An RNA of 177 nucleotides, treated with DMS and read out base by base. Conditions: 150 mM KOAc, 10 mM MgCl2 and 150 mM bicine (pH 8.5), 24 C.
[RMDB]
RNA sequence: GGGAACGACUCGAGUAGAGUCGAAAAUAUCUGAAGGUUGCCUGAUGUUCUUCUCUCUUUUAUGUUAACUUUUUCUUUUGGCUGAAGAAGCAAGGUUUGCGUCAGACAAAGAUGAGGAAUUAGACCACUCAGGUAAGUUCUUCGGAACUUACCUGAGAAAAGAAACAACAACAACAAC
Reactivity to DMS in 0.01 (KOAc 150mM, MgCl2 10mM, bicine 150mM(pH8.5), 24C), signal-to-noise 1, nucleotides 027 to 126: u000a070u010c030u000g000a090a110g030g000u010u000g020c070c020u000g020a070u010g000u020u000c030u000u020c020u000c040u000c010u010u010u010u010a090u010g010u010u020a110a120c100u000u010u000u000u000c020u010u000u000u000g000g000c030u000g000a020a020g000a090a090g030c150a040a150g010g020u000u000u000g010c010g010u000c020a030g000a030c090a040a050a030g020a040u000g000a070g020g000a040a050u010u000a070g000a120c040c130a250